[RMDB]
Annotation:
The record gives the reactivity of an RNA of 177 nucleotides to DMS and 2A3. Values cover nucleotides 27 to 126. Conditions: 150 mM KOAc, 10 mM MgCl2 and 150 mM bicine (pH 8.5), 24 C. For DMS the reverse transcriptase was MarathonRT. 2A3 is a SHAPE reagent: it acylates the 2'-hydroxyl of flexible nucleotides of all four kinds.

RNA sequence: GGGAACGACUCGAGUAGAGUCGAAAACCGACACAGGUGGUCAGGUAGAGAAUACUAAGGCGAUCGAGAUAACUGUGGUUAAGGAACUCGGCAAAAUGCCCCCGUAACUUCGGGAGAAGGGGGGCCUUUCAAGUAACCCUUUCGAGGGUUACUUGAAAAAAGAAACAACAACAACAAC
Reactivity to DMS in 0.01 (KOAc 150mM, MgCl2 10mM, bicine 150mM(pH8.5), 24C), signal-to-noise 3, nucleotides 027 to 126: c000c000g050a150c130a050c100a050g000g010u020g000g030u040c030a120g020g060u000a080g020a110g000a100a150u010a020c090u040a120a100g000g010c070g000a070u020c060g010a060g020a070u010a040a100c030u000g000u000g010g010u010u010a120a100g000g020a080a060c020u000c050g000g040c080a040a070a070a090u020g000c010c000c000c000c050g000u000a070a300c020u000u000c030g000g060g000a090g000a030a040g030g010g020g000g010g020c000c060u000
Reactivity to 2A3 in 0.01 (KOAc 150mM, MgCl2 10mM, bicine 150mM(pH8.5), 24C), signal-to-noise 5, nucleotides 027 to 126: c000c000g000a010c040a000c010a050g000g080u080g070g020u030c030a030g010g040u050a020g020a030g060a170a080u090a100c060u070a090a070g070g000c020g050a050u040c030g020a030g020a060u110a200a020c010u020g010u050g080g110u120u090a070a040g020g020a040a020c010u000c030g030g000c040a030a000a050a080u160g010c000c000c000c000c010g050u040a040a090c020u020u010c040g120g060g000a160g010a010a020g000g000g000g000g010g000c010c010u020